[RMDB]
Record summary
Chemical mapping of a 177-nucleotide RNA with 2A3 and DMS. As a SHAPE reagent, 2A3 marks flexible, mostly unpaired nucleotides at the ribose 2'-OH.
RNA sequence: GGGAACGACUCGAGUAGAGUCGAAAAGAUAUGGACUGACUCAGGGAGAUGGCGGUCGGAAACGACCGAUCAUCGAAGAACUGACAGUCCUAAGUCAAAUCAUAACACCGUUCGCGGUGUUAUGAAAGUAAUACAGAAGCUUCGGCUUCUGUAUUACAAAAGAAACAACAACAACAAC
Reactivity to 2A3 in 0.01 (KOAc 150mM, MgCl2 10mM, bicine 150mM(pH8.5), 24C), signal-to-noise 2, nucleotides 027 to 126: g000a000u020a010u070g000g000a000c000u030g020a110c100u000c060a020g020g040g030a180g000a020u000g010g020c020g010g010u010c020g000g030a040a020a000c020g000a000c000c000g010a130u030c010a000u000c000g040a070a020g020a010a000c000u000g010a000c010a000g000u000c000c010u000a010a000g010u010c030a050a020a210u060c010a000u000a000a010c000a000c020c010g040u100u080c300g000c040g140g020u000g000u000u000a000u000g000a010a000a000
Reactivity to DMS in 0.01 (KOAc 150mM, MgCl2 10mM, bicine 150mM(pH8.5), 24C), signal-to-noise 4, nucleotides 027 to 126: g000a020u010a040u010g000g010a010c020u000g010a220c300u000c020a000g020g020g010a030g030a020u000g000g010c010g000g020u000c010g010g000a030a010a030c000g000a010c000c000g000a040u010c010a010u000c000g020a140a160g010a240a300c010u000g000a030c010a010g010u000c000c000u000a000a060g000u000c010a120a110a180u010c000a010u000a000a020c000a000c010c010g030u010u020c260g030c020g030g010u000g010u000u000a000u000g000a020a050a110
The RNA was probed in 150 mM KOAc, 10 mM MgCl2 and 150 mM bicine (pH 8.5) at 24 C. Source: RMDB library TTRDES, as collected in RNAgym.